[RMDB]
RNA sequence: GGGAACGACUCGAGUAGAGUCGAAAAGAUGUGCUAAUGAUGGGAUAUUGUGUGGUUACCUGAGAUGGAGAAGACACAGUAACGAGUGGUAGGGUAGCCUGGGAAUAAACAAUGGGUGCUUGAGAAAACUCGUAGUACCUUUCGAGGUACUACGAGUAAAAGAAACAACAACAACAAC
Reactivity to 2A3 in 0.01 (KOAc 150mM, MgCl2 10mM, bicine 150mM(pH8.5), 24C), signal-to-noise 2, nucleotides 027 to 126: g040a050u050g020u030g080c020u120a140a030u150g050a100u080g060g040g080a080u020a030u150u050g070u010g040u040g030g090u050u010a010c000c000u040g000a090g000a100u120g100g000a180g040a080a000g040a000c030a000c000a040g000u070a040a030c040g010a020g080u050g030g030u040a020g050g020g040u000a000g020c000c020u000g000g030g000a050a070u100a160a130a040c050a050a020u010g000g000g020u040g020c040u050u090g040a060g100a040a130a010
Reactivity to DMS in 0.01 (KOAc 150mM, MgCl2 10mM, bicine 150mM(pH8.5), 24C), signal-to-noise 3, nucleotides 027 to 126: g020a100u000g020u020g000c030u000a100a070u000g020a090u020g000g000g020a100u000a060u000u000g000u010g000u000g020g020u010u000a070c020c030u000g010a150g020a080u010g010g000a140g000a080a130g000a120c030a010c010a090g010u010a070a130c200g000a100g020u010g010g020u000a130g010g000g010u010a060g000c080c020u030g000g020g010a050a090u010a050a080a040c110a060a050u000g010g000g020u000g010c120u000u020g000a170g000a060a060a070